[RMDB]
RNA sequence: GGGAACGACUCGAGUAGAGUCGAAAAACUCUCGACCCAACAACAUGUGAUCACGGCACAUUAAUGGUUCACACCAGUCCCAGCACUUUUUUUUUUUGGCGUGACACGUCGUAGGUACCACACCAUACGACGGUCAUGCAUUCGUGCAUGACCGUCGAAAAGAAACAACAACAACAAC
Reactivity to 2A3 in 0.01 (KOAc 150mM, MgCl2 10mM, bicine 150mM(pH8.5), 24C), signal-to-noise 2, nucleotides 027 to 126: a000c040u010c010u000c000g060a030c000c020c010a020a030c030a010a000c020a080u080g040u050g060a090u060c040a020c110g080g000c020a000c000a080u090u120a110a080u080g020g020u110u120c070a060c000a010c050c020a010g070u010c020c040c000a020g050c030a020c000u140u030u040u070u040u010u010u000u020u100u190g100g040c010g000u030g050a010c040a020c220g010u000c010g030u020a030g050g030u070a100c000c070a060c050a000c070c000a120u040a080
Reactivity to DMS in 0.01 (KOAc 150mM, MgCl2 10mM, bicine 150mM(pH8.5), 24C), signal-to-noise 3, nucleotides 027 to 126: a080c160u000c030u000c030g030a140c030c010c020a040a080c080a060a020c060a040u000g010u010g000a110u010c070a090c100g000g020c020a030c060a030u020u010a060a080u000g010g020u000u000c120a090c160a080c000c020a070g010u010c020c020c010a160g000c110a090c020u030u010u000u000u000u000u000u000u000u000u000g000g010c000g000u000g020a050c030a120c030g020u000c010g010u000a030g010g020u000a150c190c090a100c160a020c010c020a100u000a030